[RMDB]
RNA sequence: GGGAACGACUCGAGUAGAGUCGAAAAGGCGCGCGUGAGAGCAUUGUGGCCGGGCGCGGCUUUUGCGCGCGCCAUCUGAGCAGAUUUAGGCGGAAGGCCGCGGCCGGCCACAGGCUUUCCGCCUAAAGGGCGAAUCUUGGUUCGCCGGGGUUCGCCCAAAAGAAACAACAACAACAAC
Reactivity to DMS in 0.01 (KOAc 150mM, MgCl2 10mM, bicine 150mM(pH8.5), 24C), signal-to-noise 4, nucleotides 027 to 126: g010g020c100g010c180g020c050g010u030g010a020g000a010g030c000a060u030u010g020u000g000g000c010c000g000g000g000c020g020c030g000g000c000u000u000u000u000g010c030g010c010g010c080g010c100c050a010u010c040u030g000a160g020c110a060g010a080u020u030u020a080g010g000c010g000g000a020a010g000g000c000c000g000c010g010g000c000c020g000g000c000c000a010c010a030g010g000c000u000u000u010c000c000g010c000c010u010a020a080a120
Reactivity to 2A3 in 0.01 (KOAc 150mM, MgCl2 10mM, bicine 150mM(pH8.5), 24C), signal-to-noise 5, nucleotides 027 to 126: g070g010c040g000c020g010c020g100u230g050a020g000a000g010c080a130u060u070g000u000g000g000c000c000g000g000g030c010g000c000g000g000c000u020u010u000u070g110c020g000c000g010c000g010c000c000a000u000c010u040g050a030g030c030a030g000a060u060u080u160a050g030g000c000g000g010a000a000g000g000c000c000g000c000g010g060c000c000g000g000c000c000a000c000a000g000g000c000u000u000u000c000c000g010c000c000u050a070a020a000
An RNA of 177 nucleotides, treated with DMS and 2A3 and read out base by base. The RNA was probed in 150 mM KOAc, 10 mM MgCl2 and 150 mM bicine (pH 8.5) at 24 C. 2A3 adducts were read by reverse transcription with SuperScript II with manganese. DMS adducts were read by reverse transcription with MarathonRT. The DMS profile rests on 18,385 reads.